[RMDB]
RNA sequence: GGGAACGACUCGAGUAGAGUCGAAAAUCAAUCACAGAGGGAAGCAUUUGCCACUUAUGUAAUCACAACUAAGGAGUACAGAUUUGUCAAUUCAUCUGCUACAGCACAAGAUGUUAGUGCAUCAAUCCAUUGUCUAUUGCUUCGGCAAUAGACAAUGAAAAGAAACAACAACAACAAC
Reactivity to 2A3 in 0.01 (KOAc 150mM, MgCl2 10mM, bicine 150mM(pH8.5), 24C), signal-to-noise 4, nucleotides 027 to 126: u040c010a000a020u120c000a020c010a060g090a040g070g080g010a070a000g040c050a080u040u030u110g010c020c000a050c020u050u060a060u140g040u040a030a060u060c050a010c020a170a110c040u100a090a080g070g020a030g050u010a020c020a030g020a070u050u080u090g090u050c010a020a050u110u040c000a040u000c030u030g040c040u070a050c030a040g030c030a010c000a090a010g030a060u070g020u120u120a090g000u060g110c020a040u070c010a010a080u020c030
Reactivity to DMS in 0.01 (KOAc 150mM, MgCl2 10mM, bicine 150mM(pH8.5), 24C), signal-to-noise 5, nucleotides 027 to 126: u010c050a110a080u010c100a080c060a060g000a120g020g010g010a100a050g010c040a080u000u000u010g000c030c040a100c050u000u010a060u010g020u000a040a060u000c110a060c110a060a090c160u010a070a080g000g000a090g010u000a040c040a030g000a040u000u000u000g010u000c060a070a100u000u000c030a040u000c010u000g010c070u000a070c110a080g000c040a050c090a090a100g000a090u010g010u000u000a110g030u010g010c040a070u010c070a050a140u000c090
The record gives the reactivity of an RNA of 177 nucleotides to 2A3 and DMS. 2A3 adducts were read by reverse transcription with SuperScript II with manganese. The data come from the RNA Mapping Database (RMDB), library OK2TST. Conditions: 150 mM KOAc, 10 mM MgCl2 and 150 mM bicine (pH 8.5), 24 C.